The record gives the reactivity of an RNA of 177 nucleotides to DMS and 2A3.

RNA sequence: GGGAACGACUCGAGUAGAGUCGAAAACCUAAAAGGCUUUUUUCGGCGAUGCCCAACUCGACUUUCUGCCCCGGCGCCAGCGGCUCCGCGCUUGGCACAACAAUGGUAUGCGUGGUUUGCGGCCCUACUACUUAUACAGGUUCGCCUGUAUAAGUAGAAAAGAAACAACAACAACAAC
Reactivity to DMS in 0.01 (KOAc 150mM, MgCl2 10mM, bicine 150mM(pH8.5), 24C), signal-to-noise 3, nucleotides 027 to 126: c010c000u000a040a060a090a090g020g010c110u000u000u000u000u010u000c040g020g010c040g010a100u000g000c020c030c030a080a120c040u000c020g000a090c050u000u000u000c050u010g000c100c010c030c050g010g010c100g000c030c040a040g030c040g010g000c080u000c060c070g010c060g010c030u000u010g010g010c040a060c080a080a070c160a050a110u000g010g000u000a040u000g000c060g000u000g000g010u000u000u010g020c040g010g000c020c010c020u000a160
Reactivity to 2A3 in 0.01 (KOAc 150mM, MgCl2 10mM, bicine 150mM(pH8.5), 24C), signal-to-noise 4, nucleotides 027 to 126: c020c000u060a090a080a030a080g100g020c020u140u100u040u000u020u070c020g010g000c030g050a050u130g010c040c030c000a040a040c020u020c020g070a040c040u100u120u030c030u090g040c020c000c000c020g050g010c030g010c020c020a030g010c010g070g010c040u020c020c040g050c000g030c020u060u080g050g040c020a010c020a110a060c030a060a120u130g090g040u130a040u100g030c020g010u020g020g030u030u050u110g030c020g010g030c010c000c010u040a060
The 2A3 profile rests on 4,641 reads. The reactions ran in a buffer of 150 mM KOAc, 10 mM MgCl2 and 150 mM bicine (pH 8.5), at 24 C. For 2A3 the reverse transcriptase was SuperScript II with manganese.